[RMDB]
RNA sequence: GGGAACGACUCGAGUAGAGUCGAAAAGUAACGCUUCGGCGUUACAAAAAAGCGUACUACAUGAGGGAUUGGGAGAUCGAUUCCCAAAUAGGAAUCUGGGAUCGAAGAACAAUCCUACCCACCAUGUAUCGCAAAAACAGCGGUUUCGACCGCUGAAGUUCGUCUUAUGUUUCGACAUAAGACGAACAAAAGAAACAACAACAACAAC
Reactivity to 2A3 in 0.01 (KOAc 150mM, MgCl2 10mM, bicine 150mM(pH8.5), 24C), signal-to-noise 4, nucleotides 027 to 156: g000u010a010a010c010g010c000u030u150c300g140g000c020g040u000u020a030c040a000a090a020a040a000a000g050c050g030u120a100c030u010a000c040a000u000g010a050g020g020g010a010u020u040g030g030g000a220g040a080u000c000g000a010u290u300c010c000c030a010a070a000u220a060g130g080a150a120u080c110u070g000g000g000a010u000c010g000a000a000g000a050a020c010a000a010u000c000c000u000a030c000c010c010a030c010c010a000u000g000u010a010u300c030g010c040a030a050a000a000a050c000a000g010c000g010g020u040u130u160c180g070a030c000c000g000c000u000g000a040a010
Reactivity to DMS in 0.01 (KOAc 150mM, MgCl2 10mM, bicine 150mM(pH8.5), 24C), signal-to-noise 1, nucleotides 027 to 156: g000u000a010a000c000g010c040u000u020c300g090g000c000g070u000u000a030c000a020a080a070a120a050a140g000c020g030u010a120c190u000a060c070a020u010g000a110g030g040g040a050u010u000g000g010g000a180g000a050u010c030g000a050u000u000c030c010c030a000a040a040u000a150g050g030a200a200u000c040u020g000g000g040a090u000c000g000a000a100g020a240a150c010a030a090u010c000c000u010a020c010c000c000a300c040c000a000u000g020u000a050u000c010g060c000a070a020a060a010a170c010a040g020c000g000g030u000u000u010c300g030a060c030c000g000c000u000g000a050a140